[RMDB]
RNA sequence: GGGAACGACUCGAGUAGAGUCGAAAAGAAUACGAGAGAAAGAGCAUGAGGAAGAGAAGAUGGAGCUGCCAUUCACAGCGAUGGAAAUUGACCAGGAACUCACCUCUGGCCAUUUUAAGUCUGAGACCUUGCAUCCGUAAUUCGUUACGGAUGCAAGAAAAGAAACAACAACAACAAC
Reactivity to 2A3 in 0.01 (KOAc 150mM, MgCl2 10mM, bicine 150mM(pH8.5), 24C), signal-to-noise 1, nucleotides 027 to 126: g040a020a040u150a120c070g040a020g020a010g090a110a150a010g050a000g000c020a030u110g010a000g000g020a110a130g000a050g060a100a060g020a020u030g000g040a090g030c020u040g010c010c000a020u020u040c060a060c050a230g030c010g040a010u030g030g050a080a070a060u110u070g010a040c000c010a000g030g130a020a020c030u070c120a040c000c000u060c000u070g140g000c010c000a000u100u160u010u050a060a020g000u000c060u030g080a060g050a100c020
Reactivity to DMS in 0.01 (KOAc 150mM, MgCl2 10mM, bicine 150mM(pH8.5), 24C), signal-to-noise 2, nucleotides 027 to 126: g010a090a070u010a070c120g000a120g000a110g000a070a070a060g000a070g010c120a040u010g000a090g060g010a120a060g090a090g000a030a000g010a080u000g010g010a050g020c070u000g010c050c010a040u000u000c100a050c150a020g010c120g010a020u000g000g000a000a090a120u010u000g010a090c000c020a040g020g010a140a080c110u000c150a070c140c050u010c030u000g010g010c030c050a110u000u000u000u000a040a170g000u000c030u000g000a190g000a070c160
Chemical mapping of a 177-nucleotide RNA with 2A3 and DMS. For DMS the reverse transcriptase was MarathonRT. DMS (dimethyl sulfate) methylates the pairing face of unpaired adenines and cytosines. Source: RMDB library OK2TST, as collected in RNAgym. Reactivities are given for positions 27 through 126.